[RMDB]
RNA sequence: GGGAACGACUCGAGUAGAGUCGAAAACUGUUCACCGGACCGUUCGGAAUCGCCAGCAUCGCCGUCAUCGAUGCGUUAACCGACAUUAUUCCGUCGGUGGAUGAUGUAAAAACGGCGUUCAAUAAUCUGAAAGAUGACGCGAGCGCGGCGAUCAGUGACGGGCUCAUAAGUUCGCUUAUGAGCCCGUAAAAGAAACAACAACAACAAC
Reactivity to 2A3 in 0.01 (KOAc 150mM, MgCl2 10mM, bicine 150mM(pH8.5), 24C), signal-to-noise 1, nucleotides 027 to 156: c030u030g050u030u130c050a030c150c010g010g020a190c110c040g020u210u200c000g150g010a220a030u000c000g000c010c010a030g000c040a140u030c000g160c190c150g030u000c000a000u000c030g070a000u040g030c030g000u000u130a030a000c040c080g030a000c000a000u080u220a040u260u000c110c050g030u050c080g180g170u090g040g030a020u020g000a010u090g020u300a030a080a000a000a000c060g080g050c000g030u000u030c000a060a070u210a090a130u190c050u140g130a100a080a000g000a010u000g000a010c000g000c040g010a010g100c180g070c050g030g000c000g000a000u000c000a050g000u040g050
This 207-nucleotide RNA was probed chemically with 2A3. The reactions ran in a buffer of 150 mM KOAc, 10 mM MgCl2 and 150 mM bicine (pH 8.5), at 24 C. For 2A3, 408 sequencing reads were counted. Reactivities are given for positions 27 through 156.